[RMDB]
RNA sequence: GGGAACGACUCGAGUAGAGUCGAAAAACAGCGACUGUAGAGGAUGAUCAUUUGGAGAAUAGCAAGACUGGAAUAAGAGACAAGGAAAAAGCAUUUUGUAUUAUUGGGACAGGAUACUACAAAAGCCCUAAAAUAGAUAGUGUCAAUGGGAAUGAAAAAUUCAAUACCCAUUCGUGGGUAUUGAAUUAAAAGAAACAACAACAACAAC
Reactivity to DMS in 0.01 (KOAc 150mM, MgCl2 10mM, bicine 150mM(pH8.5), 24C), signal-to-noise 2, nucleotides 027 to 156: a100c050a150g020c060g010a080c050u010g030u000a090g020a160g020g030a070u000g010a080u000c020a110u010u010u000g030g020a100g000a080a160u000a070g040c060a050a080g010a060c030u000g020g000a090a070u000a090a200g000a160g000a050c030a060a090g030g000a030a020a080a060a050g000c010a130u000u010u000u000g010u000a070u000u000a110u010u010g030g030g000a090c000a030g030g010a060u010a020c020u010a030c090a020a020a010a080g000c000c030c060u010a030a020a060a070u010a040g010a070u000a050g020u000g010u000c010a040a030u000g020g020g000a050a060u000g000a040a070a060
Reactivity to 2A3 in 0.01 (KOAc 150mM, MgCl2 10mM, bicine 150mM(pH8.5), 24C), signal-to-noise 3, nucleotides 027 to 156: a000c030a020g020c000g050a050c070u060g040u160a070g020a030g050g020a030u050g020a020u060c040a070u070u070u090g030g010a060g030a090a100u050a020g030c070a080a010g020a050c020u040g020g040a030a030u090a090a030g030a000g010a020c020a040a040g000g060a030a070a010a010a010g020c030a040u050u040u030u070g030u010a060u090u020a030u040u130g020g000g000a000c000a010g000g020a030u010a110c040u000a000c070a040a020a000a000g000c030c030c030u080a060a020a010a000u040a010g030a010u060a050g080u060g000u040c000a010a040u050g010g010g060a030a060u130g080a160a090a020